[RMDB]
The data come from the RNA Mapping Database (RMDB), library OK2TST.
An RNA of 177 nucleotides, treated with 2A3 and DMS and read out base by base.
The RNA was probed in 150 mM KOAc, 10 mM MgCl2 and 150 mM bicine (pH 8.5) at 24 C.
Values cover nucleotides 27 to 126.
The DMS profile rests on 2,384 reads.

RNA sequence: GGGAACGACUCGAGUAGAGUCGAAAAUAGGAAAUUGUUGCAACCUCCUUACUUGAUUAAGCGACUGCAAAAUGAUGAAACGAAAUUUGUUAUGGCUGCCCCUCUUUCUGGCGUUGCCGCUCGCCGACUCAUACCGAGUAUUCGUACUCGGUAUGAGAAAAGAAACAACAACAACAAC
Reactivity to 2A3 in 0.01 (KOAc 150mM, MgCl2 10mM, bicine 150mM(pH8.5), 24C), signal-to-noise 1, nucleotides 027 to 126: u140a020g000g040a080a090a060u130u110g050u080u050g030c000a040a030c000c020u040c000c000u030u050a050c040u170u080g070a110u070u070a100a000g040c020g090a160c050u060g000c030a000a030a180a240u090g060a040u040g060a030a180a020c050g030a070a130a050u110u120u090g010u090u140a090u030g040g050c030u080g050c000c000c000c010u090c030u010u090u000c030u080g060g000c000g080u090u070g050c030c000g000c000u010c000g020c000c000g000a020
Reactivity to DMS in 0.01 (KOAc 150mM, MgCl2 10mM, bicine 150mM(pH8.5), 24C), signal-to-noise 3, nucleotides 027 to 126: u000a090g000g010a060a070a110u000u010g000u000u000g000c060a070a080c090c030u000c020c010u000u000a060c090u000u040g000a140u010u000a060a110g000c080g020a060c120u000g020c040a020a050a100a080u010g000a080u000g000a070a050a090c100g010a080a060a110u000u010u000g000u010u000a050u000g000g020c030u000g010c090c020c020c080u000c050u000u010u000c020u010g020g000c070g010u000u000g000c030c040g000c050u000c040g020c040c040g010a180